Background
Conditions: 150 mM KOAc, 10 mM MgCl2 and 150 mM bicine (pH 8.5), 24 C. Chemical mapping of a 207-nucleotide RNA with 2A3.
RNA sequence: GGGAACGACUCGAGUAGAGUCGAAAAGGGGUCUCCCGAUGAAAGCCUAUUGAGUCCUACUACCCACCCUACCUGAAGCCUCCACGGGUAGGAGGUAGGAUGUAAGUAGGCUGGAGGGAGACGGAGGCACCCAAACAUCAGUGUUCGCACUGAUGAAGCAUCCUCCUUGAUUCGUCAAGGAGGAUGCAAAAGAAACAACAACAACAAC
Reactivity to 2A3 in 0.01 (KOAc 150mM, MgCl2 10mM, bicine 150mM(pH8.5), 24C), signal-to-noise 1, nucleotides 027 to 156: g040g000g050g000u000c000u000c000c000c000g000a010u020g000a030a000a000g020c010c000u000a020u030u170g140a100g000u020c040c000u030a040c030u030a200c070c120c010a020c040c000c010u030a020c000c000u010g080a220a050g030c010c000u020c000c000a000c020g000g040g000u020a020g000g000a000g010g000u000a000g000g000a000u010g300u120a000a020g000u000a000g050g000c000u000g000g000a010g000g010g010a000g010a000c000g020g000a010g000g020c010a100c010c010c070a020a160a000c000a000u010c020a000g000u000g070u040u160c280g040c040a000c000u000g000a000u000g110a040a000
It was measured as part of the RMDB library RNAMAK.